Chemical mapping of a 170-nucleotide RNA with DMS and 2A3. The DMS profile rests on 13,672 reads. Values cover nucleotides 27 to 129. For DMS the reverse transcriptase was MarathonRT.
RNA sequence: GGGAACGACUCGAGUAGAGUCGAAAACGAGAAGGAGGCGGAUCUCCCUUUGCCAUCCGAGGGGACUGCGUCCUCCUUACGGAUGCCCAGGUCGGACCGCGAGGAGGUGGAGAUCCCAUGCCGACCCAUAUCGCCUGCUUCGGCAGGCGAAAAAGAAACAACAACAACAAC
Reactivity to DMS in 0.01 (KOAc 150mM, MgCl2 10mM, bicine 150mM(pH8.5), 24C), signal-to-noise 6, nucleotides 027 to 129: c080g030a080g010a070a130g010g040a240g010g010c080g010g000a020u050c050u030c010c000c110u010u020u020g020c000c080a210u020c080c010g030a040g030g000g010g000a020c120u020g020c190g020u080c050c010u030c020c020u000u000a020c050g020g020a060u040g030c080c040c030a040g020g040u000c060g010g020a140c050c010g000c070g040a080g010g000a040g040g030u060g020g020a120g000a050u030c030c010c140a130u050g020c030c020g040a110c080c030c070a080u140a090
Reactivity to 2A3 in 0.01 (KOAc 150mM, MgCl2 10mM, bicine 150mM(pH8.5), 24C), signal-to-noise 4, nucleotides 027 to 129: c040g010a020g040a080a020g020g020a010g010g010c040g000g010a030u000c040u070c010c040c000u030u030u070g070c050c010a050u020c010c000g010a040g000g030g000g000a010c040u100g090c140g040u070c000c000u050c020c010u010u020a020c000g010g000a030u060g010c000c000c000a020g010g060u060c010g010g020a060c020c010g020c020g000a060g010g010a000g010g020u050g020g000a050g000a050u020c000c000c000a000u110g000c000c000g040a040c000c000c000a030u060a030